[RMDB]
Structure probing data (DMS and 2A3) for a 177-nucleotide construct.
Values cover nucleotides 27 to 126.
The data come from the RNA Mapping Database (RMDB), library OK1LIB.
For DMS the reverse transcriptase was MarathonRT.
The RNA was probed in 150 mM KOAc, 10 mM MgCl2 and 150 mM bicine (pH 8.5) at 24 C.
RNA sequence: GGGAACGACUCGAGUAGAGUCGAAAACGUCGUGAACUAGCGACAAUGCCGUAGAUCUAUCGUUAUCUAACCGAAACAUCGUGACUAGUCGUAGAAUAGAACCAGGAGCGGGCGCUGUCAAACAAAGACGGGAUCUCAGAUUCGUCUGAGGUCCCGUAAAAGAAACAACAACAACAAC
Reactivity to DMS in 0.01 (KOAc 150mM, MgCl2 10mM, bicine 150mM(pH8.5), 24C), signal-to-noise 4, nucleotides 027 to 126: c180g000u020c020g000u000g010a120a110c090u030a140g020c000g010a040c020a110a070u050g030c000c050g000u010a080g000a060u000c040u010a140u010c060g020u040u020a070u020c080u040a100a090c090c040g010a040a090a060c200a040u000c030g000u030g040a060c010u030a070g000u000c030g000u030a050g000a080a010u000a070g000a090a090c020c050a070g000g000a080g000c020g000g000g010c030g000c020u000g000u000c080a080a090a080c160a120a090a090g010
Reactivity to 2A3 in 0.01 (KOAc 150mM, MgCl2 10mM, bicine 150mM(pH8.5), 24C), signal-to-noise 3, nucleotides 027 to 126: c030g000u000c000g020u060g080a130a100c040u030a070g030c000g010a010c000a010a040u070g000c000c000g010u020a010g000a080u000c000u020a090u030c030g050u070u040a070u010c020u040a010a070c030c020g000a040a030a030c030a070u100c040g020u010g020a040c030u020a020g030u030c020g040u020a030g040a060a010u040a030g070a020a020c000c000a020g000g020a020g030c000g020g030g000c040g010c010u020g020u030c020a040a090a060c060a010a100a050g150